[RMDB]
Source information
The record gives the reactivity of an RNA of 177 nucleotides to 2A3. Conditions: 150 mM KOAc, 10 mM MgCl2 and 150 mM bicine (pH 8.5), 24 C. 2A3 adducts were read by reverse transcription with SuperScript II with manganese. For 2A3, 773 sequencing reads were counted.
RNA sequence: GGGAACGACUCGAGUAGAGUCGAAAAGCGCGAAGUGACUUUGCGCGACGAAUUAUUUUUCAUCGCGCAAAAUGUGGUCGCGCAAGACUUUGAGUGACGAGUUUCAAGUUUCGUCGCGCAAAAUGACGGAGUAGUGCUACUUCGGUAGCACUACUCCAAAAGAAACAACAACAACAAC
Reactivity to 2A3 in 0.01 (KOAc 150mM, MgCl2 10mM, bicine 150mM(pH8.5), 24C), signal-to-noise 2, nucleotides 027 to 126: g000c030g020c020g010a000a030g080u120g300a000c050u000u000u040g000c030g040c000g020a020c020g020a030a000u190u010a300u160u220u040u000u060c010a000u020c010g000c000g000c020a020a000a000a030u280g000u000g030g030u030c010g020c000g000c000a010a010g030a020c000u040u070u070g050a050g060u020g010a010c000g010a010g020u030u120u220c160a180a080g100u000u060u040c000g000u000c000g000c000g000c000a010a040a030a070u160g040a040c080
Values cover nucleotides 27 to 126.